[RMDB]
RNA sequence: GGGAACGACUCGAGUAGAGUCGAAAAUCAAGCCGUUUCGACGGCUUGAACACUUUAGAGUCCUGAGGGACUACGAUCCAGAGUAGGGGAGGAACUCUAAGGCCUAGCCCUGCUUCGGCAGGGCUAAGUGUUGUAUCUUUUUCGAAAGAUACAACACAAAAGAAACAACAACAACAAC
Reactivity to 2A3 in 0.01 (KOAc 150mM, MgCl2 10mM, bicine 150mM(pH8.5), 24C), signal-to-noise 7, nucleotides 027 to 126: u020c000a000a000g000c000c000g010u030u030u120c220g110a020c000g000g000c000u000u000g000a000a010c010a010c010u020u020u040a010g000a000g020u020c010c000u040g070a300g060g110g080a020c010u040a050c080g120a150u080c080c070a040g010a020g220u060a040g000g020g010g040a020g000g020a060a050c000u000c000u010a010a000g020g000c000c000u010a010g000c000c000c000u010g000c000u030u030c170g090g000c000a010g000g000g000c000u000a010a000
Reactivity to DMS in 0.01 (KOAc 150mM, MgCl2 10mM, bicine 150mM(pH8.5), 24C), signal-to-noise 8, nucleotides 027 to 126: u000c000a000a010g010c000c000g010u000u000u010c160g020a040c010g010g000c000u000u000g000a010a090c160a150c030u000u000u000a010g010a020g010u000c010c000u000g010a290g030g010g010a100c010u000a020c050g000a120u000c210c210a120g000a160g010u000a040g000g010g010g000a210g010g000a040a020c010u000c010u000a020a010g000g010c040c020u000a000g000c000c000c000u000g010c000u000u000c160g020g010c000a000g000g000g010c000u000a000a040